[RMDB]
Annotation
Conditions: 150 mM KOAc, 10 mM MgCl2 and 150 mM bicine (pH 8.5), 24 C. An RNA of 177 nucleotides, treated with 2A3 and DMS and read out base by base.
RNA sequence: GGGAACGACUCGAGUAGAGUCGAAAAAUACACUGCACGUGCGUGCGAGCAGUUUUCGAAAUAAUCGUACGUACGUAAAGACCCAACUCAACUCGAUGCGAGGGUCAGCAAAGUCGUUCCCAUAUAAUGAUAAUCUGUACUUCGGUACAGAUUAUCAAAAAGAAACAACAACAACAAC
Reactivity to 2A3 in 0.01 (KOAc 150mM, MgCl2 10mM, bicine 150mM(pH8.5), 24C), signal-to-noise 2, nucleotides 027 to 126: a000u140a010c080a020c120u090g050c080a000c000g000u000g000c000g000u010g020c010g010a010g020c170a060g000u000u010u050u230c110g130a060a030a030u130a050a060u050c010g000u020a010c010g010u010a000c000g000u000a000a000a010g010a000c000c010c000a000a040c010u020c000a010a080c000u000c040g060a070u080g000c020g040a110g030g050g050u030c030a020g020c030a000a300a000g000u000c010g010u000u000c000c000c000a000u020a000u010a000a030
Reactivity to DMS in 0.01 (KOAc 150mM, MgCl2 10mM, bicine 150mM(pH8.5), 24C), signal-to-noise 3, nucleotides 027 to 126: a120u010a090c150a130c080u010g010c300a050c010g000u000g010c000g030u000g020c010g020a010g000c260a100g010u000u000u010u000c170g010a040a060a030u000a110a160u010c010g000u000a010c040g020u000a000c020g010u010a020a130a110g010a080c070c070c010a060a050c000u000c010a070a030c010u000c030g020a170u010g010c030g000a110g010g010g000u010c070a180g000c000a080a180a040g030u000c000g000u000u000c000c000c000a080u010a030u010a050a120
Reactivities are given for positions 27 through 126.